[RMDB]
This 177-nucleotide RNA was probed chemically with DMS and 2A3. DMS adducts were read by reverse transcription with MarathonRT. For 2A3 the reverse transcriptase was SuperScript II with manganese. Conditions: 150 mM KOAc, 10 mM MgCl2 and 150 mM bicine (pH 8.5), 24 C. The 2A3 profile rests on 2,017 reads.
RNA sequence: GGGAACGACUCGAGUAGAGUCGAAAAGGUACAACGUUCGCGUUGUACCAAAUAAGGCAACCUUCGUGGUGACGAGAAUAAAUGAGUGCUCGCCGUCAUAAAAAACAAUCCCCUUCGGGGGAUUGAAGGUCCAUAUAUGGUUCGCCAUAUAUGGACCAAAAGAAACAACAACAACAAC
Reactivity to DMS in 0.01 (KOAc 150mM, MgCl2 10mM, bicine 150mM(pH8.5), 24C), signal-to-noise 2, nucleotides 027 to 126: g020g010u020a000c000a020a010c000g010u010u020c160g020c030g020u020u000g010u020a040c000c000a070a020a030u000a090a030g010g020c120a100a090c030c070u010u020c100g030u000g010g000u000g010a020c010g030a030g010a150a100u010a060a170a090u040g010a130g010u010g010c050u000c030g000c010c040g010u010c030a060u040a020a090a060a090a050a130c010a010a000u000c000c000c000c010u000u010c150g030g040g010g030g010a000u000u000g010a030a070
Reactivity to 2A3 in 0.01 (KOAc 150mM, MgCl2 10mM, bicine 150mM(pH8.5), 24C), signal-to-noise 2, nucleotides 027 to 126: g000g000u000a010c000a000a000c010g040u050u030c190g010c030g090u020u000g000u000a000c000c000a000a000a010u060a000a000g080g040c020a020a110c020c000u080u150c120g040u040g060g020u020g010a020c010g020a020g020a060a080u150a230a190a160u270g050a110g130u090g020c000u000c010g030c030c010g000u010c010a030u140a020a110a000a000a000a000c000a000a000u000c020c000c000c000u020u000c070g070g010g000g000g000a000u000u020g000a020a010